Source: RMDB library OK2TST, as collected in RNAgym. Chemical mapping of a 177-nucleotide RNA with DMS. The reactions ran in a buffer of 150 mM KOAc, 10 mM MgCl2 and 150 mM bicine (pH 8.5), at 24 C. Values are in units of 0.01, from 0 to 300, in steps of 10.
RNA sequence: GGGAACGACUCGAGUAGAGUCGAAAAACCAAUAUGUGGCACAGCAACCACAUUCGGUAAUUUGAGUAAUGGCGACUCCACUGGCAGUGGCUCUUGUUCAAAAACAUCCAGUCCGGCAGCAUGAAUAAAUAAUCGUUUUCUUCGGAAAACGAUUAUUAAAAGAAACAACAACAACAAC
Reactivity to DMS in 0.01 (KOAc 150mM, MgCl2 10mM, bicine 150mM(pH8.5), 24C), signal-to-noise 3, nucleotides 027 to 126: a070c010c010a080a080u020a030u000g000u000g000g020c030a060c080a160g000c180a190a110c010c010a010c010a030u000u000c210g000g010u010a080a110u000u010u010g000a050g010u000a040a040u000g020g010c050g010a070c050u000c010c030a160c130u010g020g050c080a030g040u000g010g020c020u010c100u000u000g020u000u000c050a030a030a040a090a050c080a050u020c040c030a080g010u000c040c060g010g020c050a040g020c050a060u000g000a080a060u010a050